This 207-nucleotide RNA was probed chemically with DMS and 2A3. The RNA was probed in 150 mM KOAc, 10 mM MgCl2 and 150 mM bicine (pH 8.5) at 24 C.

[RMDB]
RNA sequence: GGGAACGACUCGAGUAGAGUCGAAAAUUAGAACACGCUGGGAUGUGAUAGAGUCCUGUAGCUAGCGAGCUGAAGCGCGCACGGCUCGCUUGGACCUACCUGACUCUACACAUCCUGUGCUGAAGCGCGCACGGCAACCGAAAGGUGCGAGAAUCAAUCUUCUAGUUACGUUCGCGUAACUAGAAGAAAAAGAAACAACAACAACAAC
Reactivity to DMS in 0.01 (KOAc 150mM, MgCl2 10mM, bicine 150mM(pH8.5), 24C), signal-to-noise 1, nucleotides 027 to 156: u000u000a210g040a080a080c020a120c050g040c010u000g030g010g010a080u010g050u000g030a150u000a010g010a010g010u010c020c050u000g010u010a080g030c050u010a050g030c060g000a030g000c050u000g030a050a050g070c000g020c000g000c030a300c040g020g000c000u020c020g020c020u020u000g040g010a030c300c020u000a020c000c000u000g000a020c000u010c010u010a030c020a020c010a030u010c000c020u000g020u010g020c010u010g010a050a020g020c000g040c020g050c000a300c050g050g010c030a070a180c020c000g000a130a090a150g080g020u000g000c000g000a210g000a110a110u010c050a090a210
Reactivity to 2A3 in 0.01 (KOAc 150mM, MgCl2 10mM, bicine 150mM(pH8.5), 24C), signal-to-noise 2, nucleotides 027 to 156: u110u070a030g020a090a030c060a010c080g010c010u010g030g000g000a000u000g060u030g080a250u000a030g010a000g000u000c000c000u030g000u010a000g010c000u000a000g000c010g000a000g010c000u030g010a240a020g030c000g010c000g000c010a000c000g000g000c000u000c020g000c000u010u210g010g010a010c000c000u000a000c000c010u010g000a000c000u000c000u000a000c000a010c010a000u000c000c000u000g000u000g000c000u020g010a130a040g000c020g000c000g020c010a030c020g000g000c000a000a000c000c000g050a080a040a020g020g000u010g010c020g030a030g090a040a080u190c080a000a100

For 2A3, 2,830 sequencing reads were counted.
For DMS, 1,978 sequencing reads were counted.